[RMDB]
RNA sequence: GGGAACGACUCGAGUAGAGUCGAAAAGAGGUGCCACGUGCAGCAUCCUGGUGAGGCUCUGCUCCCAGUGCGAGGCGGCCUGUUUGGGCAGAGCUGGACUCGUUUGCCUGCGCUAGGCAGACGCAGCUCACCGAUGUAUCUUCGGAUACAUCGGUGAAAAAGAAACAACAACAACAAC
Reactivity to DMS in 0.01 (KOAc 150mM, MgCl2 10mM, bicine 150mM(pH8.5), 24C), signal-to-noise 4, nucleotides 027 to 126: g010a110g000g000u000g010c020c020a120c300g040u000g040c030a040g010c030a030u000c040c010u000g020g000u000g020a300g000g010c010u000c010u000g000c010u010c020c300c020a040g000u000g010c040g000a130g030g030c160g000g000c020c010u000g000u020u000u000g010g000g020c010a030g000a030g010c000u000g000g000a090c040u000c060g020u000u000u000g000c040c010u000g020c160g010c110u010a200g010g010c020a000g010a060c040g010c140a060g000c100
Reactivity to 2A3 in 0.01 (KOAc 150mM, MgCl2 10mM, bicine 150mM(pH8.5), 24C), signal-to-noise 2, nucleotides 027 to 126: g120a040g060g060u020g000c000c020a060c120g020u080g000c020a010g010c000a030u060c010c000u050g040g020u050g080a060g000g020c000u020c000u000g000c000u040c030c000c000a100g010u120g100c030g020a140g180g170c050g090g020c020c010u050g030u080u170u180g020g020g000c000a000g000a000g010c000u000g000g010a010c000u000c050g010u000u020u020g020c020c010u040g000c080g030c090u110a050g000g020c000a000g000a000c000g030c060a030g010c020